[RMDB]
Conditions: 150 mM KOAc, 10 mM MgCl2 and 150 mM bicine (pH 8.5), 24 C. Chemical mapping of a 177-nucleotide RNA with DMS. Reactivities are given for positions 27 through 126.
RNA sequence: GGGAACGACUCGAGUAGAGUCGAAAAUAUAACACCGUGGUCAACAGAGCAGGAUACGCACCAUUGUCUAUCAGUGUCACCCCGACUAAAGUGAGGCUAAUUCCUACACUGAACCUCGAGUACAUCAUCGUUGGUACCGAUUCGUCGGUACCAACGAAAAAGAAACAACAACAACAAC
Reactivity to DMS in 0.01 (KOAc 150mM, MgCl2 10mM, bicine 150mM(pH8.5), 24C), signal-to-noise 1, nucleotides 027 to 126: u000a110u030a110a110c050a050c070c030g070u020g010g000u000c030a090a070c090a070g010a080g010c020a040g070g000a000u000a070c300g020c060a090c090c000a050u000u010g010u010c040u000a140u010c140a000g000u000g020u000c100a180c090c000c020c050g030a080c050u000a050a120a030g010u000g000a070g000g010c150u000a070a240u000u020c000c000u000a010c020a020c060u000g000a080a160c110c000u000c030g000a030g050u000a060c120a070u000c130a040